This 177-nucleotide RNA was probed chemically with DMS and 2A3.

RNA sequence: GGGAACGACUCGAGUAGAGUCGAAAAGUAAACUAGCUAAGGGAAAUCGGCAAAAUGGCCCCGUAACUUUGGAAGAAGGGGUGCCAGCUAUGUGAAUAGCUGGUCUCAGUGACUAGGGGGGCCCGACAUGGAGCAGUAUUUUCGAAUACUGCUCCAUAAAAGAAACAACAACAACAAC
Reactivity to DMS in 0.01 (KOAc 150mM, MgCl2 10mM, bicine 150mM(pH8.5), 24C), signal-to-noise 4, nucleotides 027 to 126: g020u020a090a070a110c060u010a040g010c030u010a120a120g000g010g010a030a110a070u020c060g010g020c160a070a040a080a050u020g000g000c000c020c000c010g020u040a070a120c050u010u000u020g020g020a110a080g010a140a120g000g000g000g020u020g000c000c000a000g000c000u000a000u000g000u050g000a160a000u000a000g000c000u000g000g000u020c030u000c020a090g000u020g000a120c020u010a060g010g010g000g010g010g010c020c020c090g010a040c180
Reactivity to 2A3 in 0.01 (KOAc 150mM, MgCl2 10mM, bicine 150mM(pH8.5), 24C), signal-to-noise 4, nucleotides 027 to 126: g130u110a040a030a110c060u040a060g070c030u040a010a100g090g010g010a050a060a040u100c030g070g000c060a040a010a010a230u100g040g000c010c000c000c000g060u050a100a100c060u090u070u130g130g010a070a020g060a050a070g030g020g000g020u070g020c010c000a010g010c000u010a020u020g170u010g060a120a050u010a030g000c000u000g000g000u020c000u000c000a050g050u020g030a040c040u080a060g030g010g000g000g040g020c000c000c000g020a030c050
For 2A3, 2,674 sequencing reads were counted.